[RMDB]
RNA sequence: GGGAACGACUCGAGUAGAGUCGAAAACGUGUAUCCUUUUCCUCCUGCCUUUUUAGCAGCUCCGGGUAAAUAUUGAUUUGCCCCAGUUUACCUCCUCUGACUGGCCAUUUGCAGACUGAGGAAUUGGGCUGUUAAGCCACUUCGGUGGCUUAACAGCAAAAGAAACAACAACAACAAC
Reactivity to DMS in 0.01 (KOAc 150mM, MgCl2 10mM, bicine 150mM(pH8.5), 24C), signal-to-noise 1, nucleotides 027 to 126: c050g000u010g000u000a080u000c060c000u080u040u040u010c000c000u000c010c020u010g000c030c140u020u000u010u020u030a070g010c060a060g010c020u020c070c180g000g000g010u000a060a070a000u010a160u030u090g030a030u000u000u000g000c060c000c000c100a100g010u000u030u020a070c140c090u000c020c010u000c010u000g000a200c050u040g000g000c140c100a100u080u000u040g000c080a070g000a020c140u000g050a030g030g000a060a020u000u000g000g010
Reactivity to 2A3 in 0.01 (KOAc 150mM, MgCl2 10mM, bicine 150mM(pH8.5), 24C), signal-to-noise 3, nucleotides 027 to 126: c050g090u110g040u280a130u130c020c010u050u000u050u040c020c000u010c000c010u020g010c020c020u040u060u040u000u300a010g040c000a010g000c020u090c070c010g000g010g000u010a000a040a060u140a160u090u210g130a110u060u030u070g020c000c000c000c000a010g000u040u000u050a070c000c000u040c010c000u050c010u020g060a080c000u010g080g070c040c000a130u050u070u160g000c000a000g060a110c050u120g000a010g020g000a010a010u050u010g030g030
Overview: The data come from the RNA Mapping Database (RMDB), library RFM100. The record gives the reactivity of an RNA of 177 nucleotides to DMS and 2A3. As a SHAPE reagent, 2A3 marks flexible, mostly unpaired nucleotides at the ribose 2'-OH. 2A3 adducts were read by reverse transcription with SuperScript II with manganese. The 2A3 profile rests on 1,154 reads. Conditions: 150 mM KOAc, 10 mM MgCl2 and 150 mM bicine (pH 8.5), 24 C. For DMS the reverse transcriptase was MarathonRT.